[RMDB]
RNA sequence: GGGAACGACUCGAGUAGAGUCGAAAAGAGUAGUCAGUAAUUAAGACUAGUCGCAUGAGAAUGUGACUAGAGUGACGUCAUGACUACGGUAUGGGAGGUCACGCCUUAAUUACACUCGGAUCCAUACGGUAGUCUUUCAUUUCGAUGGAAGGCUACCAAAAGAAACAACAACAACAAC
Reactivity to DMS in 0.01 (KOAc 150mM, MgCl2 10mM, bicine 150mM(pH8.5), 24C), signal-to-noise 9, nucleotides 027 to 126: g000a040g000u010a060g010u020c200a150g010u000a010a000u000u000a000a020g010a300c010u000a000g010u000c000g000c000a000u000g000a240g010a130a010u000g000u000g000a000c000u000a000g000a070g010u000g000a030c020g000u000c010a050u020g000a030c020u000a100c150g020g010u000a050u010g010g000g010a070g010g000u000c000a010c010g000c200c000u000u000a000a010u000u000a000c000a050c010u010c010g000g000a080u020c010c000a090u040a070c190
Reactivity to 2A3 in 0.01 (KOAc 150mM, MgCl2 10mM, bicine 150mM(pH8.5), 24C), signal-to-noise 9, nucleotides 027 to 126: g020a000g010u120a020g120u130c180a010g000u010a010a000u010u000a010a000g010a020c000u000a000g000u000c000g000c000a000u010g040a020g050a180a020u000g000u010g000a000c000u000a010g030a010g030u010g000a000c010g090u090c000a010u070g160a030c010u030a020c120g020g000u030a020u030g020g010g010a100g050g020u000c000a000c000g010c000c000u000u000a000a000u000u000a000c010a010c010u000c000g000g030a030u000c010c010a030u050a080c050